[RMDB]
RNA sequence: GGGAACGACUCGAGUAGAGUCGAAAAAAUUUAGAUUAUCCAGGUGUAGCGGUGAAAUUCGUAGAGUUCUGGUGGAUAAUGAACCGGUGGCGAAGGCGAAAGAUAACCGCUGAAAUGCUGAAGUGAACAAUCGAAUUCAGUUCGCUGAAUUCGAUUGAAAAGAAACAACAACAACAAC
Reactivity to DMS in 0.01 (KOAc 150mM, MgCl2 10mM, bicine 150mM(pH8.5), 24C), signal-to-noise 2, nucleotides 027 to 126: a030a030u010u020u000a070g000a120u000u000a080u000c060c020a190g000g010u000g000u010a030g040c010g000g000u000g000a050a140a090u000u000c000g020u000a050g010a300g010u000u000c010u000g000g010u000g010g050a180u000a100a120u000g030a090a040c010c040g010g000u000g010g010c000g030a090a160g000g020c000g000a000a010a010g000a040u010a170a040c000c040g020c000u000g000a050a080a080u010g000c020u010g000a070a100g020u000g000a060a150
Structure probing data (DMS) for a 177-nucleotide construct. It was measured as part of the RMDB library M2PK90. For DMS, 1,256 sequencing reads were counted.